[RMDB]
RNA sequence: GGGAACGACUCGAGUAGAGUCGAAAAGAAUCACCGUACCUAUUUAGGUUUACGCACCAAGAUCGGUGGAUAGCAGCCCUAUCAAUAUCUAGGAGAACUGUGCUAUGUUUAGAAGAUUAGGUAGUCUAUUACACAGCCAUGUUCGCAUGGCUGUGAACCUACUGCUCUCUUUCGAGAGAGCAGUAGGAAAAGAAACAACAACAACAAC
Reactivity to 2A3 in 0.01 (KOAc 150mM, MgCl2 10mM, bicine 150mM(pH8.5), 24C), signal-to-noise 3, nucleotides 027 to 156: g030a030a070u120c010a020c030c000g010u050a020c010c010u040a140u090u200u180a040g000g030u040u060u120a080c080g000c030a020c000c020a040a070g040a180u050c030g010g010u000g010g070a040u040a030g010c030a000g020c000c010c020u020a020u070c080a140a020u030a020u210c050u030a040g030g090a090g040a110a070c040u060g030u040g080c020u080a070u070g060u030u060u010a100g020a140a020g020a100u080u070a020g020g020u020a020g070u060c040u040a080u060u120a100c000a000c000a000g030c010c000a000u020g020u040u030c080g000c070a000u000g000g000c000u000g000u000g020a000a000
Reactivity to DMS in 0.01 (KOAc 150mM, MgCl2 10mM, bicine 150mM(pH8.5), 24C), signal-to-noise 2, nucleotides 027 to 156: g000a130a140u000c000a090c020c010g000u000a050c010c010u000a110u000u000u010a060g010g020u000u000u000a120c080g040c060a120c020c010a100a090g000a060u000c020g000g030u000g000g000a090u000a070g020c010a100g010c040c040c020u000a170u000c010a070a110u000a070u000c070u010a090g040g010a140g000a050a070c050u000g000u000g010c050u020a070u000g020u000u000u000a070g000a080a140g050a130u000u000a050g030g010u000a050g000u000c020u010a090u010u000a190c010a010c000a000g000c000c020a000u000g020u000u010c300g000c010a050u010g000g000c010u000g030u000g020a010a110
Structure probing data (2A3 and DMS) for a 207-nucleotide construct. Conditions: 150 mM KOAc, 10 mM MgCl2 and 150 mM bicine (pH 8.5), 24 C. High 2A3 reactivity points to a flexible backbone, as in loops and unpaired stretches. The data come from the RNA Mapping Database (RMDB), library M2RFPK. For DMS the reverse transcriptase was MarathonRT.